[RMDB]
Chemical mapping of a 177-nucleotide RNA with DMS and 2A3.
RNA sequence: GGGAACGACUCGAGUAGAGUCGAAAAAAUGCCGAUGAAAAUCAUCCAAUUACGAGAAGGUAGCUUGAGCCGCAGAUUCGGGAGACCUUUGAUCUAUAAGCUUCGCGAUGCGUAACAGGAGCUGGAAACAAAGAAUAAUCUUCGGAUUAUUCUUUGUAAAAGAAACAACAACAACAAC
Reactivity to DMS in 0.01 (KOAc 150mM, MgCl2 10mM, bicine 150mM(pH8.5), 24C), signal-to-noise 5, nucleotides 027 to 126: a090a060u000g020c050c060g020a090u010g000a080a050a120a090u010c050a090u000c020c050a090a110u010u000a060c070g000a150g010a080a110g010g010u000a040g000c040u000u000g000a070g010c060c090g000c180a080g010a120u000u010c110g000g000g010a090g000a100c050c030u000u000u010g010a060u000c060u010a100u000a070a070g000c030u000u010c140g020c060g010a090u010g000c060g000u000a050a070c130a140g000g000a040g000c050u000g000g000a120a090
Reactivity to 2A3 in 0.01 (KOAc 150mM, MgCl2 10mM, bicine 150mM(pH8.5), 24C), signal-to-noise 2, nucleotides 027 to 126: a000a010u120g040c050c020g010a040u070g070a030a110a030a090u100c010a020u000c020c030a070a190u130u040a090c060g000a000g010a160a020g030g020u020a020g020c020u020u050g040a010g020c010c040g070c090a050g030a220u060u090c030g000g030g020a040g030a040c000c000u060u030u130g020a000u000c050u050a110u010a190a000g010c000u030u030c040g020c030g090a050u100g030c010g050u030a040a020c010a090g020g000a000g000c020u040g030g040a050a170

The data come from the RNA Mapping Database (RMDB), library OK2TRN.